[RMDB]
RNA sequence: GGGAACGACUCGAGUAGAGUCGAAAAAGGAAAAGCCCUCCCCUGAACAAAGAGCAAACACAGUGUUUGUAAAUGAGGGUGGGACACACAGCAAUGUGCAAGGACCCUGAGUGUGCAGCAAACUGGCAACUGUGCAGCAUUUCGAUGCUGCACAGUUAAAAGAAACAACAACAACAAC
Reactivity to DMS in 0.01 (KOAc 150mM, MgCl2 10mM, bicine 150mM(pH8.5), 24C), signal-to-noise 1, nucleotides 027 to 126: a050g000g020a030a100a130a230g000c000c020c010u000c040c130c020c000u010g010a070a110c110a080a130a180g010a240g000c030a050a020a050c040a140c300a030g010u000g020u000u000u000g020u000a020a070a140u010g000a000g020g020g000u000g030g040g040a070c160a190c020a040c000a030g040c210a080a060u000g020u000g000c070a120a190g020g000a050c010c020c070u030g000a150g040u000g020u010g010c020a050g010c030a020a060a210c060u020g000g020c150